RNA sequence: GGGAACGACUCGAGUAGAGUCGAAAACCAUAGCAGCCUAGUCUGUAAAAGCUACAUUUUCUUGUCAAAGACCGUUUACUUCUUUUCUGACUCCGUUAAGGAUUAGAGGUUAACCCCAACGGAUGCUUUGUUUGGCUCUUCUCUAGUUAGCUAAACAUCAUCUUAGUCUGUUCGCAGACUAAGAUGAAAAAGAAACAACAACAACAAC
Reactivity to DMS in 0.01 (KOAc 150mM, MgCl2 10mM, bicine 150mM(pH8.5), 24C), signal-to-noise 2, nucleotides 027 to 156: c010c020a100u020a150g010c020a080g000c070c030u000a130g020u000c040u000g000u000a020a070a070a100g030c030u010a070c040a050u010u000u010u000c010u010u000g030u010c050a110a090a120g000a060c030c060g050u000u010u020a060c060u000u000c010u000u000u000u000c030u010g000a130c070u030c060c100g030u000u010a080a280g020g020a040u000u000a000g020a070g040g010u000u000a040a090c030c020c000c050a070a070c040g010g000a070u000g000c020u000u000u000g000u010u000u010g040g000c000u000c050u000u000c040u000c080u000a090g030u000u000a070g050c020u000a040a030a040c130a180
Reactivity to 2A3 in 0.01 (KOAc 150mM, MgCl2 10mM, bicine 150mM(pH8.5), 24C), signal-to-noise 5, nucleotides 027 to 156: c000c000a030u070a030g040c030a010g010c010c060u120a040g030u140c030u030g080u080a050a100a020a020g010c010u070a050c070a140u110u140u080u070c030u110u110g060u070c040a060a030a050g040a050c020c020g020u050u060u070a020c000u020u040c000u020u020u000u000c020u060g060a060c020u010c100c090g040u060u060a070a030g000g000a010u010u030a030g020a010g000g030u090u130a050a080c010c020c010c050a020a010c020g040g020a040u050g020c000u060u060u050g010u000u040u050g000g000c000u000c000u090u050c050u030c010u040a040g110u100u090a010g020c010u040a060a020a020c000a020

Conditions: 150 mM KOAc, 10 mM MgCl2 and 150 mM bicine (pH 8.5), 24 C.
The record gives the reactivity of an RNA of 207 nucleotides to DMS and 2A3.
Values cover nucleotides 27 to 156.
The 2A3 profile rests on 4,499 reads.
It was measured as part of the RMDB library RSTRND.
The DMS profile rests on 2,944 reads.